[RMDB]
RNA sequence: GGGAACGACUCGAGUAGAGUCGAAAAGAAAUCUAAGGUUCACGUGCCAGUGUUUUUCGUCAGACAGCGUCGCUUGUCAGAACCUGCAGAACGUUUCAUCUGUUCUCCGACGCAUGCAGAGCGGACAUCCGUAGGUCACUUUCGAGUGACCUACGGAAAAAGAAACAACAACAACAAC
Reactivity to DMS in 0.01 (KOAc 150mM, MgCl2 10mM, bicine 150mM(pH8.5), 24C), signal-to-noise 1, nucleotides 027 to 126: g000a000a150a010u000c060u070a080a090g000g080u000u000c060a100c000g000u040g040c020c000a090g000u000g000u000u000u000u030u060c070g000u030c070a070g000a040c010a010g000c000g050u000c020g000c170u000u060g090u000c050a080g040a020a080c030c050u010g050c050a000g020a020a080c210g010u000u000u000c030a130u030c020u000g000u040u020c000u000c060c040g000a090c050g050c070a040u000g010c180a050g010a070g000c010g000g010a120c200a110
Reactivity to 2A3 in 0.01 (KOAc 150mM, MgCl2 10mM, bicine 150mM(pH8.5), 24C), signal-to-noise 2, nucleotides 027 to 126: g030a050a040a000u140c010u030a090a150g000g080u080u110c030a040c180g000u150g070c020c000a010g000u000g090u010u030u000u110u110c000g000u000c010a020g020a130c000a050g030c000g030u000c000g000c060u030u030g070u190c030a070g150a090a040c000c000u000g010c030a040g010a170a060c010g000u060u100u060c000a190u070c040u060g040u110u070c040u020c000c000g110a170c000g000c000a000u070g000c040a030g000a070g280c090g050g040a000c000a100